[RMDB]
RNA sequence: GGGAACGACUCGAGUAGAGUCGAAAACCGAUGCCGUUGUUCCUACUGCCCUGGAUGUACUCAAAAAGAAUAUUGGAUCUCUCUUCAGCAACGUCUGCAACGUCACGGAGGAUGUCAGUGGGGAGAUGACCUGGAGGAUGUUCGCAUCCUCCAGGUCAAAAGAAACAACAACAACAAC
Reactivity to 2A3 in 0.01 (KOAc 150mM, MgCl2 10mM, bicine 150mM(pH8.5), 24C), signal-to-noise 1, nucleotides 027 to 126: c070c000g000a020u080g120c120c020g020u120u080g030u070u020c000c000u040a110c000u000g000c030c030c030u010g080g000a120u090g030u000a000c000u000c040a060a000a000a130a000g160a040a090u150a040u260u110g070g160a230u000c000u000c000u000c000u000u020c000a000g000c010a250a000c000g110u050c000u070g030c000a070a050c000g160u170c040a000c110g000g000a000g060g000a080u040g070u120c090a000g100u000g000g000g000g000a010g030a020u080
An RNA of 177 nucleotides, treated with 2A3 and read out base by base. The RNA was probed in 150 mM KOAc, 10 mM MgCl2 and 150 mM bicine (pH 8.5) at 24 C. Values cover nucleotides 27 to 126. Source: RMDB library OK1LIB, as collected in RNAgym.